[RMDB]
RNA sequence: GGGAACGACUCGAGUAGAGUCGAAAAAUCGCCGAACGUCUCAAGCCUUACUACAAUUUGCGAUACUCGAACAAGAAUGGUCGUGUCGCGCACGAAUGUUUGAUUGAUUUGGCAGAGUUUGAGAAGAUCGUGCUGCAUCGUUCGCGAUGCAGCACGAAAAAGAAACAACAACAACAAC
Reactivity to 2A3 in 0.01 (KOAc 150mM, MgCl2 10mM, bicine 150mM(pH8.5), 24C), signal-to-noise 2, nucleotides 027 to 126: a000u020c060g020c000c000g020a110a000c070g070u000c000u000c000a000a130g000c000c040u010u200a120c030u040a040c000a050a120u000u000u250g020c030g010a000u000a020c000u040c040g050a090a030c160a090a300g180a190a170u300g070g030u070c060g000u000g000u000c030g040c000g010c030a100c030g040a110a110u110g020u100u070u200g070a080u000u080g000a160u050u000u110g010g000c050a020g040a020g090u000u000u000g070a090g000a030a170g040a110

Chemical mapping of a 177-nucleotide RNA with 2A3. The data come from the RNA Mapping Database (RMDB), library OK1LIB. The reactions ran in a buffer of 150 mM KOAc, 10 mM MgCl2 and 150 mM bicine (pH 8.5), at 24 C. For 2A3 the reverse transcriptase was SuperScript II with manganese.